[RMDB]
RNA sequence: GGGAACGACUCGAGUAGAGUCGAAAAGGCGGCCGUGAGACCAUUGUCGCUGAAUGCGGGUUAUGCAGUGGGCGUUUGAGCACAUAAUCGUCGAAGGGACGGGCCGGCGACAGGCUGUCUCGCAUUACGGCGAAUGGUCGUUCGCGAUCGUUCGCCGAAAAGAAACAACAACAACAAC
Reactivity to 2A3 in 0.01 (KOAc 150mM, MgCl2 10mM, bicine 150mM(pH8.5), 24C), signal-to-noise 9, nucleotides 027 to 126: g030g000c000g010g020c020c010g020u040g020a060g020a020c010c030a040u030u090g070u050c010g000c020u030g040a030a000u060g010c010g010g030g020u130u120a080u220g030c030a040g060u090g030g120g010c040g020u030u100u260g080a050g020c040a030c020a110u220a130a080u090c040g050u010c030g070a140a080g130g030g020a010c030g010g020g010c000c010g000g000c000g010a010c010a010g090g000c010u030g010u040c000u000c000g010c010a020u030u130a070
Reactivity to DMS in 0.01 (KOAc 150mM, MgCl2 10mM, bicine 150mM(pH8.5), 24C), signal-to-noise 6, nucleotides 027 to 126: g010g010c010g010g010c040c030g030u020g010a100g020a060c030c030a110u020u020g010u020c020g020c020u010g010a060a040u010g000c010g000g020g000u030u020a050u050g010c060a080g010u010g010g000g010c010g010u020u010u030g020a130g030c040a070c110a080u020a060a090u020c030g020u010c030g000a150a130g000g010g000a050c030g000g010g020c020c020g000g000c020g010a040c060a040g000g000c020u000g000u010c000u010c000g000c040a030u010u010a150